Structure probing data (2A3 and DMS) for a 177-nucleotide construct. For 2A3 the reverse transcriptase was SuperScript II with manganese.
RNA sequence: GGGAACGACUCGAGUAGAGUCGAAAAGAGCACUGAGUGAACGAGACUCCGUCUGCAAUCCCGGCACCUCGGGAGGCCGAGGCUGGCGGAUCACUCAAGGUUAGGAGCUGGAGACUAGCCCGGCCAAUAAACACAUGAGCUUCGGCUCAUGUGUUUAAAAAGAAACAACAACAACAAC
Reactivity to 2A3 in 0.01 (KOAc 150mM, MgCl2 10mM, bicine 150mM(pH8.5), 24C), signal-to-noise 2, nucleotides 027 to 126: g020a000g000c050a010c130u040g020a010g080u040g000a190a020c080g030a070g060a140c050u000c050c030g000u000c000u030g020c030a050a090u020c020c010c050g000g080c030a030c000c050u060c020g030g000g080a080g060g010c000c000g010a060g000g020c000u000g000g000c000g010g030a050u070c000a020c020u020c020a070a040g090g000u160u080a030g020g040a100g010c070u130g000g020a100g020a070c030u060a030g000c010c010c030g000g000c000c000a020a100
Reactivity to DMS in 0.01 (KOAc 150mM, MgCl2 10mM, bicine 150mM(pH8.5), 24C), signal-to-noise 2, nucleotides 027 to 126: g010a090g010c080a090c110u030g000a060g020u000g000a110a090c090g000a110g010a180c080u000c060c050g050u000c000u000g020c020a120a030u000c040c020c000g000g000c080a280c080c020u000c030g000g000g000a160g000g020c010c000g010a080g010g010c110u040g000g010c040g060g000a070u010c000a010c000u000c010a100a090g010g000u020u020a130g010g010a030g040c040u000g020g010a160g000a130c010u010a040g000c100c010c050g000g000c000c020a060a070

Values cover nucleotides 27 to 126. For DMS the reverse transcriptase was MarathonRT. For 2A3, 1,054 sequencing reads were counted.